The record gives the reactivity of an RNA of 207 nucleotides to DMS and 2A3. The 2A3 profile rests on 1,273 reads. For DMS, 904 sequencing reads were counted. High 2A3 reactivity points to a flexible backbone, as in loops and unpaired stretches. The data come from the RNA Mapping Database (RMDB), library OK3TST.
[RMDB]
RNA sequence: GGGAACGACUCGAGUAGAGUCGAAAAUCAUAGUAAAUUAAGCACAGAAUGCUUAAUGCCGAUAAAGAAAUCACAAUUAGUUGAAUAUUUUGCGCGAUAUGAUAUAGAUGGUAUUGCCUUAAACACAAAUACAAGCACAAUUCGAUUAUCCAAAUGGCCAUAGUAGCUUCUUCGGAAGCUACUAUGGAAAAGAAACAACAACAACAAC
Reactivity to DMS in 0.01 (KOAc 150mM, MgCl2 10mM, bicine 150mM(pH8.5), 24C), signal-to-noise 1, nucleotides 027 to 156: u000c000a150u000a280g070u000a060a170a170u020u000a000a080g060c000a110c050a200g090a000a300u000g000c020u000u000a020a090u000g090c060c040g000a020u000a020a020a120g020a140a140a040u020c040a040c110a020a150u000u000a150g040u010u000g020a060a090u000a090u000u000u000u000g020c000g000c000g000a070u000a090u020g000a060u000a090u000a130g020a170u000g000g040u000a060u000u000g020c020c090u040u000a150a060a210c140a070c060a030a020a020u000a040c000a060a240g060c060a040c060a020a090u000u000c060g000a060u000u000a030u000c090c020a100a080a140u000g040g000
Reactivity to 2A3 in 0.01 (KOAc 150mM, MgCl2 10mM, bicine 150mM(pH8.5), 24C), signal-to-noise 3, nucleotides 027 to 156: u070c020a020u080a040g080u100a030a290a000u030u010a000a000g000c010a030c010a100g180a300a070u090g020c000u010u010a010a010u020g020c000c020g040a010u090a140a120a020g130a090a020a050u060c070a040c080a090a130u180u120a070g060u060u080g020a060a020u060a110u050u040u090u110g120c110g000c000g040a010u030a010u120g060a010u040a010u090a130g110a070u090g000g050u020a060u000u090g010c010c000u070u100a060a090a000c090a000c030a060a160a000u130a040c050a000a100g050c060a020c010a070a070u090u070c010g040a020u040u160a050u130c030c030a050a060a140u180g070g000
Conditions: 150 mM KOAc, 10 mM MgCl2 and 150 mM bicine (pH 8.5), 24 C.